[RMDB]
RNA sequence: GGGAACGACUCGAGUAGAGUCGAAAAUUGGUUCGGAACGCUCGUAUUGGAUGCUCUUGAAGCGGCUACUUGCCUCCAGAUGCAGCUGCUGCUGUUUCGGUUCCGGAUGUCCACGAGUGACAAUGUCAAAUCCGAUAUCGUUCGCGAUAUCGGAUUUAAAAGAAACAACAACAACAAC
Reactivity to DMS in 0.01 (KOAc 150mM, MgCl2 10mM, bicine 150mM(pH8.5), 24C), signal-to-noise 3, nucleotides 027 to 126: u010u000g000g000u000u000c010g010g020a050a070c070g000c020u000c040g000u030a120u040u020g010g000a050u000g010c060u000c050u000u020g000a030a060g010c110g000g000c020u020a080c110u000u020g020c030c010u030c080c080a140g000a050u000g030c030a040g030c040u000g010c110u040g000c040u000g010u000u010u000c030g010g000u010u010c030c010g010g000a010u000g010u010c010c060a090c080g010a060g000u030g010a070c100a100a130u000g000u010c110
Reactivity to 2A3 in 0.01 (KOAc 150mM, MgCl2 10mM, bicine 150mM(pH8.5), 24C), signal-to-noise 4, nucleotides 027 to 126: u070u080g070g000u040u050c030g060g010a060a010c010g000c040u030c020g020u050a140u050u160g070g000a040u080g030c070u020c020u030u100g000a070a020g100c070g030g010c010u130a150c110u140u280g030c000c010u030c060c010a040g020a090u080g000c000a040g030c000u200g000c030u130g020c010u020g060u020u050u030c020g030g000u050u000c010c010g000g020a020u040g030u000c000c000a060c030g010a030g000u040g060a110c090a060a180u100g050u160c040

This 177-nucleotide RNA was probed chemically with DMS and 2A3. The RNA was probed in 150 mM KOAc, 10 mM MgCl2 and 150 mM bicine (pH 8.5) at 24 C. It was measured as part of the RMDB library OK1LIB.